[RMDB]
RNA sequence: GGGAACGACUCGAGUAGAGUCGAAAAGGCCGCGAACAUCUCGACGCAUCGAAGGCACUCAACGACGUGGUGCAGGCCGCGCUCGCGACCGGCAAAAAGGGCGGAUACGUGACCGUCAAGGUUGCGGCCGAACCGAUCGACUCCGGCGCGGUCCGGCGGAACCUCUAAUGUUCGCAUUAGAGGUUCCAAAAGAAACAACAACAACAAC
Reactivity to DMS in 0.01 (KOAc 150mM, MgCl2 10mM, bicine 150mM(pH8.5), 24C), signal-to-noise 1, nucleotides 027 to 156: g060g000c040c000g010c010g010a130a130c070a080u010c030u000c020g030a050c070g030c040a190u000c070g030a110a100g000g020c020a160c070u030c040a080a200c010g000a070c000g030u040g010g010u000g040c060a080g010g040c000c010g000c020g020c080u000c120g020c040g030a050c000c020g020g040c070a090a010a060a080a110g000g030g000c010g040g030a130u000a060c030g050u010g040a050c000c000g060u010c130a120a090g030g000u000u000g000c000g010g010c020c020g000a060a060c010c000g000a060u000c030g000a100c050u020c060c040g010g010c000g030c060g030g000u020c000c000g040g000c300
Reactivity to 2A3 in 0.01 (KOAc 150mM, MgCl2 10mM, bicine 150mM(pH8.5), 24C), signal-to-noise 3, nucleotides 027 to 156: g050g000c040c000g040c030g030a040a030c040a130u070c030u010c050g070a040c030g010c030a060u030c060g040a030a030g050g000c030a020c040u080c040a040a070c060g120a010c050g060u120g010g010u020g020c020a030g030g020c010c000g000c020g000c020u070c010g040c000g090a160c010c000g000g000c070a050a070a020a030a020g020g000g000c030g000g020a040u120a240c000g000u000g010a010c000c010g080u210c180a060a070g000g000u020u010g020c000g000g000c000c000g010a070a050c000c000g020a020u080c020g040a080c040u020c010c010g010g000c010g000c000g010g000u040c030c010g040g000c040